The record gives the reactivity of an RNA of 177 nucleotides to 2A3 and DMS. Values cover nucleotides 27 to 126. For DMS the reverse transcriptase was MarathonRT. 2A3 adducts were read by reverse transcription with SuperScript II with manganese.
RNA sequence: GGGAACGACUCGAGUAGAGUCGAAAACACGAACGUUGGCUAAUCCUGGUCGGACAUCAGGUGGUUAGUGCAUUGGCAUAAGCCAUCUUGGCGCUAAUAGAUACUAAUCGUAGCAUAGCUGAAUAAAAUUUAAUAAUACCUUCGGGUAUUAUUAAAUAAAAGAAACAACAACAACAAC
Reactivity to 2A3 in 0.01 (KOAc 150mM, MgCl2 10mM, bicine 150mM(pH8.5), 24C), signal-to-noise 5, nucleotides 027 to 126: c070a000c040g140a210a010c070g020u060u140g050g000c020u020a000a050u030c010c010u000g030g000u020c090g100g060a040c030a100u040c020a030g050g010u040g030g020u050u010a020g000u010g000c030a040u030u140g070g000c020a030u040a300a050g010c020c000a040u080c070u120u180g010g000c000g000c010u020a020a000u040a100g090a050u040a050c020u050a030a050u020c050g060u040a010g030c050a090u050a030g000c020u030g070a120a040u180a110a120a020
Reactivity to DMS in 0.01 (KOAc 150mM, MgCl2 10mM, bicine 150mM(pH8.5), 24C), signal-to-noise 5, nucleotides 027 to 126: c050a090c140g010a050a110c150g000u010u010g000g000c010u000a070a140u020c010c010u000g000g030u010c160g020g030a220c110a030u010c050a030g000g020u020g010g000u010u010a030g020u000g010c040a110u010u030g010g010c010a150u020a070a180g010c000c000a050u010c110u030u010g010g020c030g000c020u000a030a030u010a110g010a110u010a030c020u010a020a030u000c010g010u010a060g020c070a110u020a070g000c020u020g000a100a060u020a040a060a060
For 2A3, 3,263 sequencing reads were counted. It was measured as part of the RMDB library OK1LIB. The RNA was probed in 150 mM KOAc, 10 mM MgCl2 and 150 mM bicine (pH 8.5) at 24 C.